An RNA of 207 nucleotides, treated with DMS and 2A3 and read out base by base. For 2A3, 1,422 sequencing reads were counted. The reactions ran in a buffer of 150 mM KOAc, 10 mM MgCl2 and 150 mM bicine (pH 8.5), at 24 C. Values are in units of 0.01, from 0 to 300, in steps of 10. Source: RMDB library OK3TST, as collected in RNAgym.
RNA sequence: GGGAACGACUCGAGUAGAGUCGAAAAUUCGGUCCUGUGGAGCGGACCGUUUGCUCCGUCAGGAUGUGGAGGUAUCGCGCCCUCCUAUGCGCGUAUGUACAUCGAUACGGUUAUGUCGCCUUUGUGUCGGCGUUUGACACUUACACAUACCGGAUAAAUAUACGGACCUAUUCGUAGGUCCGUAUAUAAAAGAAACAACAACAACAAC
Reactivity to DMS in 0.01 (KOAc 150mM, MgCl2 10mM, bicine 150mM(pH8.5), 24C), signal-to-noise 2, nucleotides 027 to 156: u010u000c000g050g020u010c020c000u000g070u000g010g010a090g050c070g000g000a110c140c200g000u000u010u000g010c020u010c000c050g000u010c030a020g000g030a050u000g010u000g000g010a050g010g020u010a070u000c020g010c030g030c050c010c040u010c020c000u000a050u010g030c060g030c030g010u020a050u010g020u000a060c110a130u010c060g040a160u000a070c060g030g030u000u000a040u000g010u010c060g010c050c120u000u000u000g020u000g040u000c010g040g020c070g020u000u000u000g000a030c020a010c010u000u000a050c000a030c010a040u000a050c010c050g030g000a080u000a030a090
Reactivity to 2A3 in 0.01 (KOAc 150mM, MgCl2 10mM, bicine 150mM(pH8.5), 24C), signal-to-noise 3, nucleotides 027 to 156: u060u020c000g030g000u010c000c000u020g000u110g080g060a060g020c060g000g110a080c040c000g020u040u080u090g020c020u010c000c000g140u100c000a000g000g090a030u040g040u090g050g010a030g010g000u030a040u110c030g010c000g010c000c000c000u020c000c010u020a060u050g000c080g020c030g010u020a040u130g080u030a040c050a190u060c110g070a100u070a230c010g050g020u040u060a040u050g040u080c050g040c070c070u100u100u090g100u060g020u010c020g000g080c150g020u030u040u120g030a020c010a000c010u030u070a010c010a000c000a010u030a140c010c020g020g010a010u060a050a220